This 207-nucleotide RNA was probed chemically with 2A3 and DMS. It was measured as part of the RMDB library OK3TST. Values cover nucleotides 27 to 156. DMS adducts were read by reverse transcription with MarathonRT. The RNA was probed in 150 mM KOAc, 10 mM MgCl2 and 150 mM bicine (pH 8.5) at 24 C.
[RMDB]
RNA sequence: GGGAACGACUCGAGUAGAGUCGAAAAGAUAGCACAGGUGAUUCCGGUAAGGAAUAUAUUGGGCACAUGGAUAGCAAUAUAGGUAGCUCACGCGUUGAUACGGGCGAUUCCAGAUAUAAUACACCCAUGAACAGCUUUGGCGCCGAUUUGUCAACUCCCCUUACCUUAGAUUCGUCUAAGGUAAGGGAAAAGAAACAACAACAACAAC
Reactivity to 2A3 in 0.01 (KOAc 150mM, MgCl2 10mM, bicine 150mM(pH8.5), 24C), signal-to-noise 2, nucleotides 027 to 156: g030a000u040a000g030c030a010c040a060g060g000u080g050a090u060u020c010c060g000g110u160a120a100g010g050a070a010u120a020u010a030u050u120g030g000g050c030a020c020a080u050g090g000a020u060a060g080c070a110a010u050a010u080a160g060g030u050a020g000c020u030c000a030c040g050c060g020u060u070g040a070u050a130c050g020g000g000c030g020a030u040u050c020c000a020g060a030u060a000u030a150a080u070a080c070a070c000c030c000a020u050g030a090a020c060a060g070c030u110u100u060g030g000c010g000c060c000g050a110u040u040u070g020u050c010a010a010c050u070c020
Reactivity to DMS in 0.01 (KOAc 150mM, MgCl2 10mM, bicine 150mM(pH8.5), 24C), signal-to-noise 1, nucleotides 027 to 156: g000a130u000a100g010c040a010c020a050g020g040u010g020a110u000u020c000c020g010g010u000a080a180g020g040a050a070u000a110u010a130u000u000g000g020g050c010a110c070a140u020g030g010a100u000a070g030c090a030a110u000a090u000a040g010g000u000a090g020c060u010c040a040c010g010c020g050u000u000g000a110u000a060c020g000g020g020c010g020a200u000u000c010c040a150g030a130u000a040u000a080a100u000a100c060a040c000c000c030a090u000g030a060a050c020a120g030c050u000u000u000g010g030c070g000c050c040g010a170u010u010u000g000u000c020a030a070c000u000c010